[RMDB]
An RNA of 177 nucleotides, treated with 2A3 and DMS and read out base by base.
For DMS, 782 sequencing reads were counted.
Reactivities are rounded to 0.1 and cut off at 0 and 3.
The reactions ran in a buffer of 150 mM KOAc, 10 mM MgCl2 and 150 mM bicine (pH 8.5), at 24 C.

RNA sequence: GGGAACGACUCGAGUAGAGUCGAAAAGAUAUGGAGCUUCAACAGCUACUACAGUGAUGACCUCGGAAACGAGCAAGCUGAGUAGACAUGAAGCUCCUAAGUCAAAAGACGACGUUCGCGUCGUCAAGUCACUGUAACCGUUCGCGGUUACAGUGACAAAAGAAACAACAACAACAAC
Reactivity to 2A3 in 0.01 (KOAc 150mM, MgCl2 10mM, bicine 150mM(pH8.5), 24C), signal-to-noise 2, nucleotides 027 to 126: g050a000u090a070u220g000g000a000g030c000u000u000c010a110a110c050a170g080c000u040a010c000u230a300c010a000g050u040g130a300u130g100a070c020c010u010c020g000g040a080a070a070c010g000a040g020c020a100a040g000c010u010g000a000g010u000a000g040a000c040a050u020g010a010a000g000c000u000c010c000u000a000a000g020u050c010a000a080a000a140g010a010c000g000a000c000g030u090u090c220g000c030g260u090c020g000u010c000a000a010
Reactivity to DMS in 0.01 (KOAc 150mM, MgCl2 10mM, bicine 150mM(pH8.5), 24C), signal-to-noise 1, nucleotides 027 to 126: g020a090u000a300u000g010g000a000g030c000u000u010c000a020a140c300a060g000c000u000a000c000u000a130c000a000g020u020g020a080u000g000a100c300c000u000c000g000g000a110a050a160c000g020a010g000c090a050a160g000c000u000g000a100g010u000a000g000a070c060a220u000g000a020a020g020c000u000c000c010u000a010a040g000u000c020a020a110a190a100g000a030c020g000a000c000g000u000u000c140g100c040g090u000c000g000u000c080a040a090